[RMDB]
RNA sequence: GGGAACGACUCGAGUAGAGUCGAAAAGGUCUAUUUGCAUUUACGCAACGAAAAAAUAAAAUCCAAAAUAUGUUGUCCCGACGAUGGAGAGACUCUUAACAACAUCAGCGCCCACGCGUCUCGACGACUCGUCAACAUUAAUCAGUACAAGUGCAAACCCACGUUACAGUUUCGACUGUAACGUGGGAAAAGAAACAACAACAACAAC
Reactivity to 2A3 in 0.01 (KOAc 150mM, MgCl2 10mM, bicine 150mM(pH8.5), 24C), signal-to-noise 2, nucleotides 027 to 156: g060g000u020c020u050a180u040u060u110g000c020a050u120u150u110a080c040g000c050a010a090c100g160a110a050a020a020a000a020u290a040a050a020a010u080c050c030a050a020a030a080u140a040u060g020u040u020g020u010c010c030c000g000a000c010g010a000u080g000g020a070g000a000g020a040c020u070c000u140u120a140a010c170a010a030c020a120u110c060a000g010c050g050c020c040c000a010c070g040c020g020u000c020u000c000g080a060c000g000a000c050u000c030g060u040c010a040a020c010a010u000u230a150a030u070c020a000g030u030a060c030a100a000g000u010g070c010a010a000a110